[RMDB]
Source information
The record gives the reactivity of an RNA of 177 nucleotides to 2A3 and DMS. In probing experiments dimethyl sulfate is read out at A N1 and C N3, which are open when not base-paired. The RNA was probed in 150 mM KOAc, 10 mM MgCl2 and 150 mM bicine (pH 8.5) at 24 C. As a SHAPE reagent, 2A3 marks flexible, mostly unpaired nucleotides at the ribose 2'-OH. The data come from the RNA Mapping Database (RMDB), library M2PK50. Reactivities are rounded to 0.1 and cut off at 0 and 3.

RNA sequence: GGGAACGACUCGAGUAGAGUCGAAAAGUUGUAAGGUUCGCCUUACAACAAAAUAAAACAGGCUAGAACCGGCCUGAAAAAGGUACGAAGAUCGAAAGAUCAAAAGACACUUGUUCGCAAGUGUCAACAACUCUUAAUACUUCGGUAUUAAGAGUUGAAAAGAAACAACAACAACAAC
Reactivity to 2A3 in 0.01 (KOAc 150mM, MgCl2 10mM, bicine 150mM(pH8.5), 24C), signal-to-noise 3, nucleotides 027 to 126: g000u000u000g000u010a000a010g020g000u010u080c160g110c010c000u000u010a000c000a000a010c000a000a040a000a000u070a000a050a010a030c030a010g000g010c000u030a040g070a190a060c060c050g010g010c000c000u010g020a040a000a010a000a010g110g000u080a060c080g080a180a040g010a030u010c020g030a070a040a020g000a000u000c020a010a080a030a070g010a000c000a000c000u000u020g000u050u060c140g010c080a010a000g010u010g010u000c000a010a010
Reactivity to DMS in 0.01 (KOAc 150mM, MgCl2 10mM, bicine 150mM(pH8.5), 24C), signal-to-noise 5, nucleotides 027 to 126: g000u000u010g000u010a000a000g010g020u010u010c240g040c000c000u010u000a010c000a000a010c000a030a040a050a060u010a060a090a150a160c050a020g000g000c000u000a060g010a130a120c100c070g000g000c000c000u000g000a010a030a040a090a050g000g020u010a080c150g000a120a110g000a010u000c010g010a120a100a120g010a020u000c010a070a070a100a120g000a010c000a010c000u000u000g000u010u010c190g020c000a010a010g010u000g000u000c000a070a130